[RMDB]
RNA sequence: GGGAACGACUCGAGUAGAGUCGAAAACGGUGCCAGCCGCCGCGGUAAUACCGGCAGCCCGAGUGAUGACCGCUAUUAUUGGGCCUAAAGCGUCCGUAGCUGGCCAGGCAAGUCCAUCGGGAAAUCCACCUCAGAUCAGCUUCGGCUGAUCUGAGGUAAAAGAAACAACAACAACAAC
Reactivity to DMS in 0.01 (KOAc 150mM, MgCl2 10mM, bicine 150mM(pH8.5), 24C), signal-to-noise 1, nucleotides 027 to 126: c110g110g010u000g000c020c060a060g030c080c000g000c060c120g000c020g000g000u020a080a020u020a090c210c000g000g000c100a290g020c000c110c040g000a050g020u000g010a140u000g010a180c040c100g000c120u000a070u000u000a100u100u080g030g010g000c000c000u020a190a030a170g040c100g000u000c000c010g000u000a050g000c000u000g000g000c020c060a300g010g000c080a090a120g000u000c060c000a000u010c050g000g010g040a100a170a070u080c070c080
Reactivity to 2A3 in 0.01 (KOAc 150mM, MgCl2 10mM, bicine 150mM(pH8.5), 24C), signal-to-noise 2, nucleotides 027 to 126: c000g020g010u030g050c010c000a060g040c080c000g000c020c060g000c050g040g030u090a130a010u000a110c000c000g000g000c040a040g050c000c000c010g030a010g000u130g050a110u040g030a060c030c070g000c040u000a030u180u010a060u190u180g010g010g000c000c000u200a170a100a000g000c050g030u070c040c000g020u030a050g000c040u040g000g000c000c000a010g030g000c020a030a010g050u000c040c010a030u050c020g000g040g000a080a020a020u000c020c000
Annotation:
Chemical mapping of a 177-nucleotide RNA with DMS and 2A3. Values are in units of 0.01, from 0 to 300, in steps of 10. Values cover nucleotides 27 to 126. 2A3 adducts were read by reverse transcription with SuperScript II with manganese. The RNA was probed in 150 mM KOAc, 10 mM MgCl2 and 150 mM bicine (pH 8.5) at 24 C. Source: RMDB library RFM100, as collected in RNAgym.